[RMDB]
RNA sequence: GGGAACGACUCGAGUAGAGUCGAAAACUCGCCUUCCGAUAUGAAUUUACACGGCAUUUCAUAGACUACUGUAAUCGAUGUUAUGGUGUGAAGAAUUUAUUUGAUUGGAUGCAUUUUUUAAUACCACCUUCCUCAGGGCCUUCGGGCCCUGAGGAAGAAAAGAAACAACAACAACAAC
Reactivity to 2A3 in 0.01 (KOAc 150mM, MgCl2 10mM, bicine 150mM(pH8.5), 24C), signal-to-noise 1, nucleotides 027 to 126: c000u000c000g000c000c150u000u000c000c020g000a000u000a000u090g000a090a070u070u100u000a250c150a090c000g010g010c000a000u020u010u020c000a000u000a070g070a000c000u010a000c120u160g110u200a130a130u050c050g020a040u000g000u000u000a010u020g230g010u000g000u000g270a200a100g170a020a020u010u000u000a070u000u070u090g160a160u000u110g010g000a000u000g100c000a090u010u000u060u060u060u000a200a010u100a110c000c210a040c040